RNA sequence: GGGAACGACUCGAGUAGAGUCGAAAAGAUAUGGAUACCAUGGAGCUGGUGUCGGAAACGACAUCAGCAGCGUUGAAAUGGAUCCUAAGUCAAAAGGUAGGAGGUAGCUUCGGCUACCUCCUACCAAGUAGUUACUUCUGUUCGCAGAAGUAACUACAAAAGAAACAACAACAACAAC
Reactivity to DMS in 0.01 (KOAc 150mM, MgCl2 10mM, bicine 150mM(pH8.5), 24C), signal-to-noise 4, nucleotides 027 to 126: g000a020u000a290u000g000g000a040u010a110c000c000a010u000g010g010a200g010c000u000g010g030u000g010u000c000g020g000a060a040a150c010g010a010c000a000u000c040a010g010c010a030g020c210g030u000u020g010a100a170a020u000g000g000a070u000c000c000u010a030a170g000u000c020a080a070a120a070g000g020u000a000g000g010a000g010g020u000a010g020c000u010u010c220g020g000c000u000a000c010c000u000c000c000u000a000c000c000a000a040